[RMDB]
RNA sequence: GGGAACGACUCGAGUAGAGUCGAAAAGCUUCCUCUUGGCGCGGAGGUUUAACUGCGCUCGCUCCCCAUUUCGGUGUGGGCGCACCGGAUUUACAAAUUAAAGUCCUUUAGGGAGCGGAAAGGGACAAAAACUUGCACGUGUUCGCACGUGCAAGAACGUUAGUCUAUGGUUCGCCAUAGACUAACGAAAAGAAACAACAACAACAAC
Reactivity to DMS in 0.01 (KOAc 150mM, MgCl2 10mM, bicine 150mM(pH8.5), 24C), signal-to-noise 1, nucleotides 027 to 156: g000c120u000u020c000c000u010c020u010u010g020g030c000g080c010g000g020a110g040g000u000u000u000a100a160c030u000g000c020g050c010u000c000g020c040u020c010c000c000c110a230u010u000u000c000g000g000u000g030u010g030g020g040c120g010c010a000c010c000g010g010a130u000u000u000a270c190a050a040a080u000u000a090a050a140g040u000c010c000u010u000u000a050g000g020g020a070g010c040g030g000a000a050a070g000g000g000a100c060a060a060a060a120a190c010u000u000g000c000a000c010g020u000g000u000u000c300g040c050a030c000g000u010g000c000a010a000g000a120a120
Reactivity to 2A3 in 0.01 (KOAc 150mM, MgCl2 10mM, bicine 150mM(pH8.5), 24C), signal-to-noise 2, nucleotides 027 to 156: g030c030u130u070c000c000u000c010u010u040g030g010c010g030c010g020g020a010g010g050u080u130u060a030a030c010u020g000c010g030c000u000c000g000c000u010c000c000c000c000a040u040u000u000c010g000g000u010g010u030g010g070g000c030g000c010a000c000c000g000g020a000u010u200u210a100c180a070a050a000u110u190a130a100a000g020u010c000c000u000u010u050a010g000g000g000a000g000c010g010g000a070a010a000g040g000g040a020c070a020a050a020a020a030c010u000u000g010c010a000c000g000u000g010u080u050c100g020c060a000c000g010u020g010c000a000a000g000a000a000